[RMDB]
Structure probing data (2A3) for a 177-nucleotide construct. Reactivities are given for positions 27 through 126.
RNA sequence: GGGAACGACUCGAGUAGAGUCGAAAAACAGCACUUUGAUACUAUUUUUAUUGAUGAAGUCGAUGCCUUUCCUUUAUCAAUGGAUAAAAGUUUACAACAAGCAUUGAAGUCAUCUUCUAAAGUUGAAGGUAGAUCACGAGUUCGCUCGUGAUCUACCAAAAGAAACAACAACAACAAC
Reactivity to 2A3 in 0.01 (KOAc 150mM, MgCl2 10mM, bicine 150mM(pH8.5), 24C), signal-to-noise 2, nucleotides 027 to 126: a000c040a000g200c010a000c000u020u020u150g140a080u080a050c020u000a300u000u140u010u080u140a150u040u180g000a000u000g030a080a020g130u000c000g030a000u010g000c000c000u110u120u070c000c000u000u000u060a060u000c010a070a210u250g210g000a010u020a020a000a000a110g070u130u140u110a180c140a160a080c010a000a000g030c000a000u000u040g000a000a000g110u010c010a100u000c040u030u010c100u160a200a120a000g000u000u070g060a020a000